[RMDB]
RNA sequence: GGGAACGACUCGAGUAGAGUCGAAAAUCCCGCCCGCGGCACACAGUCACCCGCCCGAGUGAACGUCACCAACUCGGCUGGAUUCCAAGCUGGUUGCCUGUCCUACGCUCAGCGCAACAACCGCAGACAGAUUAUGUAGUUUCGACUACAUAAUCUGAAAAGAAACAACAACAACAAC
Reactivity to 2A3 in 0.01 (KOAc 150mM, MgCl2 10mM, bicine 150mM(pH8.5), 24C), signal-to-noise 9, nucleotides 027 to 126: u010c000c000c000g020c010c010c010g030c030g020g010c020a020c010a000c000a060g050u070c020a040c030c010c010g040c020c030c020g020a010g010u050g050a110a040c060g070u050c030a020c060c010a060a050c020u020c030g020g000c010u040g020g030a120u140u070c040c010a050a020g020c020u040g050g000u040u040g010c000c010u010g030u050c010c020u050a050c040g020c030u030c030a020g010c010g000c070a010a060c010a030a030c040c010g010c010a010g040a070
Reactivity to DMS in 0.01 (KOAc 150mM, MgCl2 10mM, bicine 150mM(pH8.5), 24C), signal-to-noise 9, nucleotides 027 to 126: u000c000c000c010g010c080c030c020g030c070g010g010c070a050c080a140c080a070g000u000c060a070c060c010c020g010c170c010c020g000a040g020u000g010a100a110c100g010u010c050a050c060c040a120a050c040u000c020g010g010c040u010g000g000a150u010u000c060c070a110a100g010c020u000g010g010u010u010g000c030c030u000g010u000c040c030u000a080c090g000c030u000c030a050g010c070g000c040a050a050c080a090a090c040c020g010c060a110g000a260